[RMDB]
RNA sequence: GGGAACGACUCGAGUAGAGUCGAAAAGAUAUGGAGCAUCUUCGGAAGCUUUGAUCUCGGAAACGAGGGAGCUUACGAAGAGUGCUCCUAAGUCAAAGCUGGCAGAUCGUUCGCGAUCUGCCAGCAACGGUUACACUAAGUUCGCUUAGUGUAACCGAAAAGAAACAACAACAACAAC
Reactivity to 2A3 in 0.01 (KOAc 150mM, MgCl2 10mM, bicine 150mM(pH8.5), 24C), signal-to-noise 1, nucleotides 027 to 126: g040a020u100a030u180g000g000a000g030c010a000u000c010u020u000c010g030g030a040a000g010c010u300u300u090g040a070u050c010u000c000g020g000a150a100a070c020g010a010g010g000g000a000g050c020u040u060a010c020g000a000a000g000a000g000u000g000c000u000c000c000u000a030a000g030u010c040a020a100a120g000c010u010g000g000c030a030g020a010u000c030g030u180u070c270g010c020g160a000u010c010u020g040c020c020a000g000c010a000a000
Reactivity to DMS in 0.01 (KOAc 150mM, MgCl2 10mM, bicine 150mM(pH8.5), 24C), signal-to-noise 3, nucleotides 027 to 126: g010a030u000a300u020g020g000a000g020c000a070u000c000u000u000c000g000g010a090a070g010c000u000u000u000g010a040u000c000u000c010g010g000a140a090a180c000g020a050g000g000g020a010g040c000u000u000a290c010g010a020a000g010a040g000u010g020c000u000c000c000u010a000a060g000u000c070a120a090a120g010c000u000g000g030c000a010g010a020u000c000g040u000u010c300g030c000g000a000u000c000u000g000c000c030a000g010c000a000a000